[RMDB]
RNA sequence: GGGAACGACUCGAGUAGAGUCGAAAAACGUCCUCGUCGUACAGAACGGUAACAUGUUUUCCGAACAUCCGCGCUUGGGUAUACGAGUAUACACCUUACCCAAUCCUCGCCAACGGGGAGGAUGGAAUUAAGGAGAGGGCCUUCGGGCCCUCUCCAACGAUAACAGAUUGUUCGCAAUCUGUUAUCGAAAAGAAACAACAACAACAAC
Reactivity to 2A3 in 0.01 (KOAc 150mM, MgCl2 10mM, bicine 150mM(pH8.5), 24C), signal-to-noise 3, nucleotides 027 to 156: a000c030g020u030c040c020u010c010g300u000c010g010u070a040c020a090g070a180a020c020g000g020u060a050a020c060a160u160g040u080u050u070u050c040c050g020a040a030c020a060u000c010c030g040c010g010c060u010u030g060g000g000u030a080u040a040c060g030a040g110u060a040u030a170c110a090c030c020u030u040a030c000c000c000a010a030u040c020c020u040c050g060c040c010a100a070c060g000g010g020g010a010g000g000a010u010g000g040a060a100u140u130a200a020g000g010a010g020a020g000g000g010c030c020u050u060c130g130g010g000c000c000c000u000c000u000c000c000a000a000
Reactivity to DMS in 0.01 (KOAc 150mM, MgCl2 10mM, bicine 150mM(pH8.5), 24C), signal-to-noise 2, nucleotides 027 to 156: a090c020g020u000c020c020u000c000g000u010c070g020u000a130c050a060g030a060a230c010g010g000u000a110a100c090a170u010g010u000u000u000u000c060c050g000a070a120c020a080u000c020c010g050c080g040c110u000u000g010g090g010u000a040u000a110c020g030a270g020u000a140u000a140c080a080c050c000u010u000a040c000c000c020a060a120u000c010c040u000c040g000c040c110a160a110c030g010g020g010g010a030g020g000a020u000g010g010a100a160u020u010a120a140g000g000a010g000a050g080g170g010c020c000u000u010c190g050g020g000c010c000c000u000c000u000c000c000a000a020